Source: RMDB library OK3TST, as collected in RNAgym. Chemical mapping of a 207-nucleotide RNA with DMS and 2A3. The 2A3 profile rests on 356 reads. High DMS reactivity at an A or C suggests that its Watson-Crick edge is free. Values cover nucleotides 27 to 156.
RNA sequence: GGGAACGACUCGAGUAGAGUCGAAAAAGAGAACAAAGGGAGGGUUUGGGUUUUACAGCAAAAGUUUCUGCCCAGGUUCCCAGUCAGGUUCGUUUAUACAAAUGAACGAUUGAACCGCACUUAGUUCUGAUUGGUUGAUACAGCUGAGCCCUGAUUAUGCCUAAUUUAUGUUCGCAUAAAUUAGGCAAAAAGAAACAACAACAACAAC
Reactivity to DMS in 0.01 (KOAc 150mM, MgCl2 10mM, bicine 150mM(pH8.5), 24C), signal-to-noise 2, nucleotides 027 to 156: a120g010a140g010a080a150c040a060a130a120g000g030g000a050g030g040g010u000u000u000g010g020g050u000u000u000u000a090c100a060g030c070a070a070a060a130g000u000u000u000c040u000g000c000c000c020a290g050g010u000u000c010c010c040a110g000u000c000a030g010g000u000u000c000g020u020u000u000a120u000a250c230a030a100a130u000g000a030a030c030g010a120u010u000g000a050a070c000c040g030c090a020c110u000u000a090g000u000u000c010u000g010a110u000u000g000g000u000u000g010a090u000a060c050a100g010c020u000g010a100g030c080c070c010u000g040a090u000u000a180
Reactivity to 2A3 in 0.01 (KOAc 150mM, MgCl2 10mM, bicine 150mM(pH8.5), 24C), signal-to-noise 1, nucleotides 027 to 156: a030g100a050g040a070a020c040a110a150a050g020g030g080a090g040g020g010u130u170u100g060g030g050u060u110u110u110a020c010a000g060c060a060a140a040a000g000u000u000u050c030u050g000c000c000c000a000g000g050u000u000c020c000c040a000g020u010c020a010g030g000u040u040c020g000u050u000u000a270u000a060c180a030a200a090u160g010a000a000c010g040a040u050u080g050a050a000c000c000g000c000a000c070u060u070a020g070u130u000c010u020g040a150u090u050g000g000u060u200g000a060u120a030c050a020g010c030u010g000a000g000c010c040c000u220g020a040u300u270a070
For DMS, 2,875 sequencing reads were counted.